[RMDB]
RNA sequence: GGGAACGACUCGAGUAGAGUCGAAAAGAAAACAAGUACCGAGAACAUUGUUUUCGCUGCUUGGCGUUGCCGUUUUGUGUUGCAGUUGGUUGGGUAACGCCGCAAAUACCAACAGAAGAGAGAGAUACGCAUGAUAUACCUUCGGGUAUAUCAUGCGAAAAGAAACAACAACAACAAC
Reactivity to 2A3 in 0.01 (KOAc 150mM, MgCl2 10mM, bicine 150mM(pH8.5), 24C), signal-to-noise 2, nucleotides 027 to 126: g070a000a030a000a000c000a000a010g010u070a070c060c060g030a060g060a030a060c030a300u080u160g000u010u000u000u000c000g000c040u010g000c000u000u090g000g040c010g000u000u000g030c020c040g090u000u020u290u180g230u020g070u010u170g030c140a120g040u080u050g010g020u060u090g030g020g000u000a000a000c000g030c000c040g040c020a020a060a000u180a010c000c000a030a010c030a010g100a180a030g020a020g030a000g040a000g020a160u040a170
Reactivity to DMS in 0.01 (KOAc 150mM, MgCl2 10mM, bicine 150mM(pH8.5), 24C), signal-to-noise 2, nucleotides 027 to 126: g040a080a070a140a130c020a000a020g000u000a070c240c020g000a130g020a050a040c050a160u000u010g000u000u000u000u000c010g010c300u000g000c000u040u000g000g000c040g010u020u010g010c020c000g050u070u030u040u000g020u030g020u000u000g000c130a130g070u000u000g000g000u000u000g030g000g020u010a020a020c300g050c000c010g040c180a050a030a080u020a050c010c050a010a010c060a110g000a060a220g000a160g020a080g000a030g000a060u040a080